[RMDB]
RNA sequence: GGGAACGACUCGAGUAGAGUCGAAAAGCAGCAGAGACUACCCACUCCAUGGAAGUCCUUAUGUCUGACCCAUUUUAAAGUUUCAUCCACAUGACAGUUGUACAAGGGGUGGUUCUAAGAUAUUUGGCACCAUGUAAUCCUUCGGGAUUACAUGGUGAAAAGAAACAACAACAACAAC
Reactivity to DMS in 0.01 (KOAc 150mM, MgCl2 10mM, bicine 150mM(pH8.5), 24C), signal-to-noise 3, nucleotides 027 to 126: g010c090a020g020c030a050g000a100g000a060c010u020a110c050c030c010a070c100u040c100c150a150u010g000g010a100a070g020u010c070c060u000u020a040u020g000u030c020u020g000a170c000c010c020a070u040u020u010u010a020a100a150g000u000u000u010c010a030u000c020c010a050c070a040u020g010a070c050a120g000u030u010g020u000a080c110a060a100g030g010g000g040u020g000g010u000u000c060u000a070a060g000a090u100a080u000u020u020g000g000
Reactivity to 2A3 in 0.01 (KOAc 150mM, MgCl2 10mM, bicine 150mM(pH8.5), 24C), signal-to-noise 5, nucleotides 027 to 126: g030c020a000g000c060a010g140a000g010a120c010u110a140c000c020c020a040c050u110c110c030a130u130g010g040a090a010g010u000c050c000u130u160a160u140g060u000c040u050g090a150c010c020c000a030u110u140u010u130a130a180a010g030u010u020u000c040a050u050c030c010a080c030a080u090g050a030c050a150g090u120u050g070u240a030c040a140a150g020g000g000g030u000g040g000u020u000c040u070a120a120g040a190u090a120u180u090u110g150g010
Chemical mapping of a 177-nucleotide RNA with DMS and 2A3. The RNA was probed in 150 mM KOAc, 10 mM MgCl2 and 150 mM bicine (pH 8.5) at 24 C.